[RMDB]
RNA sequence: GGGAACGACUCGAGUAGAGUCGAAAAGCAGCCAUAACGAUCCUGCGGAGCAUGAAGAAGGAUACGGUUGAGGGUAGUAGGACACCACCAAUACCGAAACCUCGUAAGCGGACCUUAAAGCCUGAUGCCAAUGCUCGGGCGGUGAAACUGCCCCAAGUAAUAGGCGCAUAUUCGUAUGCGCCUAUUAAAAAGAAACAACAACAACAAC
Reactivity to 2A3 in 0.01 (KOAc 150mM, MgCl2 10mM, bicine 150mM(pH8.5), 24C), signal-to-noise 2, nucleotides 027 to 156: g000c030a010g030c020c030a140u110a140a030c070g040a060u050c040c000u140g100c080g040g000a030g000c040a040u090g060a120a110g060a080a030g010g020a060u110a260c010g030g040u030u070g030a080g080g000g000u050a040g020u030a050g010g080a030c010a030c100c000a050c040c010a070a030u110a190c010c020g020a060a050a030c000c010u010c020g000u020a080a010g080c030g030g010a020c000c000u050u050a090a030a000g030c000c000u050g030a070u100g010c000c030a100a080u090g010c010u000c000g010g040g000c030g010g000u050g040a110a060a060c000u060g000c010c030c000c010a010a010g070
Reactivity to DMS in 0.01 (KOAc 150mM, MgCl2 10mM, bicine 150mM(pH8.5), 24C), signal-to-noise 2, nucleotides 027 to 156: g030c010a120g070c030c040a090u020a050a180c040g000a080u000c020c020u000g050c070g000g010a160g050c040a110u000g010a090a160g030a040a100g000g020a070u010a160c000g000g020u000u010g010a270g050g020g010u000a080g020u020a060g080g020a180c100a070c000c020a040c000c020a080a280u000a050c020c020g000a120a140a150c000c010u000c090g000u040a100a140g000c020g020g000a090c000c020u010u000a060a120a180g020c020c020u030g010a100u000g040c000c060a040a190u000g000c020u000c020g050g000g040c000g000g000u000g000a150a040a090c050u000g010c000c020c000c010a020a200g010